[RMDB]
RNA sequence: GGGAACGACUCGAGUAGAGUCGAAAAUACCGUCUUCUCCCCGACGGUUUCAAUCCAUAGCUUCACGUUGUGUAGCGUAGGUGGAAGGUAUCGUGUGGUGUAUAAACACCACAUAGUCUCUUAGGGCUCAAGCUGAUAAACUUCGGUUUAUCAGCAACUAAUAGCAAAAGUUCGCUUUUGCUAUUAGAAAAGAAACAACAACAACAAC
Reactivity to 2A3 in 0.01 (KOAc 150mM, MgCl2 10mM, bicine 150mM(pH8.5), 24C), signal-to-noise 5, nucleotides 027 to 156: u080a000c010c000g020u000c020u160u050c030u110c020c000c010c020g010a010c010g020g000u010u040u060c060a030a040u050c020c000a030u040a100g010c010u050u060c020a030c070g300u290u230g000u070g020u040a020g010c040g060u070a060g000g110u030g000g030a040a040g070g030u120a050u190c080g010u020g000u000g010g000u000g060u030a110u110a300a220a020c010a000c000c000a000c000a010u010a000g020u000c010u000c020u140u110a050g030g040g010c040u070c140a090a040g020c000u010g000a000u000a000a000a000c000u040u090c190g060g000u010u000u000a000u000c000a000g000c000a000a000
Reactivity to DMS in 0.01 (KOAc 150mM, MgCl2 10mM, bicine 150mM(pH8.5), 24C), signal-to-noise 4, nucleotides 027 to 156: u000a070c000c000g010u000c010u000u000c080u000c030c020c010c190g020a030c010g000g000u000u010u000c050a100a120u000c020c020a140u000a190g000c050u000u000c050a040c070g030u000u010g020u010g000u000a050g010c020g030u000a050g010g020u000g010g000a080a080g010g030u000a040u010c070g020u000g020u000g010g040u020g020u010a180u010a140a100a120c010a010c010c000a010c000a010u000a030g010u000c020u000c040u000u000a070g020g010g010c100u000c090a080a150g000c000u000g000a020u000a010a000a020c000u000u000c300g040g010u010u000u000a010u000c000a000g000c000a000a080